[RMDB]
RNA sequence: GGGAACGACUCGAGUAGAGUCGAAAAAAGAGUAUAUCCUACGGGAAUCCGUGUUCUCCCCUGAUGUCCAGUCCCCCCCCGGUCCGAGUGAAGGGGGACUCCGGGACUCCUUGCAGACUGGGGACGACUACUCGUAUGAGUUCGCUCAUACGAGUAGAAAAGAAACAACAACAACAAC
Reactivity to DMS in 0.01 (KOAc 150mM, MgCl2 10mM, bicine 150mM(pH8.5), 24C), signal-to-noise 1, nucleotides 027 to 126: a050a090g010a100g020u000a130u010a120u000c010c000u010a050c050g000g010g000a200a050u000c000c060g000u000g010u000u000c030u000c010c020c000c020u000g000a090u000g010u000c120c090a110g000u020c000c000c010c060c090c030c000c040g010g000u000c000c030g010a230g060u000g010a050a040g050g000g010g010g000a020c080u000c120c170g010g030g080a060c010u000c090c070u000u000g020c040a100g000a140c120u010g000g010g020g000a070c210g010a220

Structure probing data (DMS) for a 177-nucleotide construct. Conditions: 150 mM KOAc, 10 mM MgCl2 and 150 mM bicine (pH 8.5), 24 C.